RNA sequence: GGGAACGACUCGAGUAGAGUCGAAAAGGUACUUUGUUAUAUUUGUGGAGGCACCGGGGAUACAUUCGACACGUCUGAUAAAUAUGGCUUGGCUUCUAAAAGUCUGAAGCUUCAAUCCUUUUAUCAAAAACCAAACUGAACAGUUUAGUCAUGUGGAAAAUACCAUACCAUUCGUGGUAUGGUAUUUAAAAGAAACAACAACAACAAC
Reactivity to DMS in 0.01 (KOAc 150mM, MgCl2 10mM, bicine 150mM(pH8.5), 24C), signal-to-noise 3, nucleotides 027 to 156: g020g020u000a050c050u000u000u000g000u010u000a120u000a140u000u000u010g030u010g010g010a110g040g030c040a060c040c030g060g020g030g020a160u000a040c060a120u000u000c000g020a070c020a050c080g020u000c090u000g010a070u000a020a030a070u000a060u010g050g030c130u000u010g010g030c010u000u000c020u000a030a100a120a180g030u000c150u000g010a050a060g030c020u000u010c040a040a070u000c020c010u000u000u000u000a040u010c030a030a060a080a060a060c030c020a020a030a050c030u000g000a060a090c110a070g030u000u000u000a050g010u000c000a090u000g020u000g020g000a120
Reactivity to 2A3 in 0.01 (KOAc 150mM, MgCl2 10mM, bicine 150mM(pH8.5), 24C), signal-to-noise 3, nucleotides 027 to 156: g040g010u060a070c060u160u130u150g050u170u040a170u090a160u150u120u120g060u060g040g050a030g010g000c040a010c040c000g010g000g030g010a000u070a130c020a070u030u130c050g040a020c040a020c110g030u030c050u000g000a000u030a010a060a000u130a080u080g000g000c010u010u010g010g000c000u000u010c030u080a210a200a050a030g090u010c100u090g010a010a010g010c000u120u140c010a030a060u020c000c000u010u050u010u010a020u030c000a090a070a020a020a000c050c030a070a020a020c030u040g030a060a020c030a080g010u060u100u120a020g000u090c060a080u110g040u090g090g000a030

An RNA of 207 nucleotides, treated with DMS and 2A3 and read out base by base. 2A3 adducts were read by reverse transcription with SuperScript II with manganese. The 2A3 profile rests on 1,770 reads. The DMS profile rests on 8,378 reads. The reactions ran in a buffer of 150 mM KOAc, 10 mM MgCl2 and 150 mM bicine (pH 8.5), at 24 C. DMS adducts were read by reverse transcription with MarathonRT.